[RMDB]
RNA sequence: GGGAACGACUCGAGUAGAGUCGAAAACACGUUCAUGUGCGACACCACCUCGACGAUUUUGGCUGGUGUCAUGGCGGUCGUCAGCGGAACAAUGGUGCGGCGCGACACAUUUGGAUCACACAACAUAGUCAUCUGGACGAUUCGUCGUCCAGAUGACAAAAGAAACAACAACAACAAC
Reactivity to 2A3 in 0.01 (KOAc 150mM, MgCl2 10mM, bicine 150mM(pH8.5), 24C), signal-to-noise 2, nucleotides 027 to 126: c050a000c040g060u100u080c030a040u200g020u030g090c070g010a000c000a000c010c000a030c010c010u060c150g010a100c050g140a230u160u130u050u120g120g000c150u070g020g010u010g070u050c010a010u010g000g000c050g060g020u060c020g030u080c030a030g010c010g000g040a130a120c020a080a150u160g020g020u040g020c000g000g030c000g030c030g080a000c010a000c000a040u100u060u050g140g010a000u030c020a010c020a010c020a080a120c010a060u060a080
Reactivity to DMS in 0.01 (KOAc 150mM, MgCl2 10mM, bicine 150mM(pH8.5), 24C), signal-to-noise 1, nucleotides 027 to 126: c070a090c110g000u000u010c040a120u010g010u020g010c070g000a020c060a010c060c020a120c050c020u000c210g010a130c100g000a070u020u000u010u000g000g030c190u010g020g010u000g010u020c020a020u000g010g000c110g010g000u000c070g000u000c030a190g020c110g010g000a050a020c040a040a170u000g000g000u000g000c070g000g070c040g020c110g010a110c050a020c040a040u010u000u000g010g020a140u000c110a020c120a040c190a010a030c190a160u000a140
Background
Conditions: 150 mM KOAc, 10 mM MgCl2 and 150 mM bicine (pH 8.5), 24 C. Chemical mapping of a 177-nucleotide RNA with 2A3 and DMS. For 2A3 the reverse transcriptase was SuperScript II with manganese. For 2A3, 1,117 sequencing reads were counted. The DMS profile rests on 739 reads.